[RMDB]
RNA sequence: GGGAACGACUCGAGUAGAGUCGAAAACGGGUGAAGAAGAAAGUCCGUACCUGCUCGGCCCGGAGUGAGGAGGAGCCCCCGGCAGAGGAGGUGACCCCAGACGAGGUGAUCCAGGCGGAGGAGGUGAGGCAAAUGAUAGUUUCGACUAUCAUUUGCCAAAAGAAACAACAACAACAAC
Reactivity to DMS in 0.01 (KOAc 150mM, MgCl2 10mM, bicine 150mM(pH8.5), 24C), signal-to-noise 3, nucleotides 027 to 126: c040g000g000g010u030g030a070a040g010a110a140g000a120a130a170g040u000c020c020g000u000a070c000c000u010g020c000u000c020g000g030c000c010c020g010g020a020g020u020g000a210g000g020a120g020g010a300g000c050c000c000c010c040g000g020c110a150g000a110g010g010a000g000g000u000g010a160c050c030c000c010a010g040a110c090g000a110g010g010u020g000a150u000c000c020a120g000g000c010g020g000a020g000g000a030g000g000u020g010a060
Reactivity to 2A3 in 0.01 (KOAc 150mM, MgCl2 10mM, bicine 150mM(pH8.5), 24C), signal-to-noise 5, nucleotides 027 to 126: c010g000g000g030u080g020a040a100g040a080a010g050a040a120a030g030u030c010c000g010u020a020c020c000u040g100c000u010c020g140g010c020c010c010g000g010a030g000u130g060a130g020g030a100g020g000a020g010c000c000c000c000c000g100g000c090a050g010a130g110g020a050g010g030u080g120a290c000c000c010c000a030g040a070c080g050a050g080g090u160g010a040u020c010c010a000g030g020c040g090g000a020g010g030a010g010g000u030g040a030